[RMDB]
RNA sequence: GGGAACGACUCGAGUAGAGUCGAAAAGAUAUGGAUCGUUCGAUGAACUACUUCCUCGGAAACGAGAGAAGCAUCGAGACGAUCCUAAGUCAAAACGCAGUACAAAUCUUCGGAUUUGUACUGCGAAGUAUCCGCUUCAGUUCGCUGAAGCGGAUACAAAAGAAACAACAACAACAAC
Reactivity to 2A3 in 0.01 (KOAc 150mM, MgCl2 10mM, bicine 150mM(pH8.5), 24C), signal-to-noise 1, nucleotides 027 to 126: g000a010u080a020u200g010g000a000u010c000g000u030u000c000g010a010u010g030a040a020c040u150a060c010u300u000c000c000u020c000g050g000a180a070a020c010g000a020g000a020g000a020a010g000c000a000u000c010g040a070g030a000c020g000a000u000c000c000u000a020a010g030u000c030a000a000a050a110c020g000c020a000g010u000a000c000a000a000a020u010c000u080u170c300g020g010a020u020u000u030g000u000a000c010u000g000c000g000a000a000
Reactivity to DMS in 0.01 (KOAc 150mM, MgCl2 10mM, bicine 150mM(pH8.5), 24C), signal-to-noise 2, nucleotides 027 to 126: g000a080u020a300u010g010g000a020u000c000g020u010u000c000g020a010u010g030a080a030c020u010a300c040u000u000c010c010u000c020g010g000a180a070a190c000g000a030g010a150g000a060a000g030c000a000u000c020g000a040g010a010c000g000a010u000c000c000u000a000a110g010u000c060a070a050a140a160c030g030c000a000g000u000a000c000a010a000a010u000c000u000u010c160g060g010a000u000u000u000g010u000a000c000u010g000c000g010a010a070

The data come from the RNA Mapping Database (RMDB), library TTRDEL. This 177-nucleotide RNA was probed chemically with 2A3 and DMS. For DMS the reverse transcriptase was MarathonRT. Values cover nucleotides 27 to 126.